[RMDB]
RNA sequence: GGGAACGACUCGAGUAGAGUCGAAAACACUGCAAGCUUCAAAAUUCUUUGCUUUCUCAGCCCUAAAUAACAAUAGACUGGAAGCUCUGUGAGGUCAGGGAUUUGGCCUCUUUUAGUCACUGAAGCAUCUGUAUCAGGCAUAGGAGCUGAUUCAGUGCGUACGCCACAAAUUCGUUUGUGGCGUACGAAAAGAAACAACAACAACAAC
Reactivity to 2A3 in 0.01 (KOAc 150mM, MgCl2 10mM, bicine 150mM(pH8.5), 24C), signal-to-noise 1, nucleotides 027 to 156: c000a020c050u130g020c000a060a000g000c010u000u020c040a150a160a040a040u140u150c060u090u020u030g000c000u140u080u030c040u070c070a030g080c030c010c010u140a170a180a070u240a040a030c090a020a060u090a110g100a030c040u020g000g030a020a010g000c000u000c000u020g110u020g010a000g000g010u020c000a000g020g230g160a180u120u030u120g000g000c010c000u000c000u000u000u020u020a020g010u020c020a000c100u030g000a070a000g010c070a060u110c030u020g050u020a060u070c000a010g020g020c000a020u070a120g150g000a030g000c000u000g000a050u040u060c000a000g000u000g040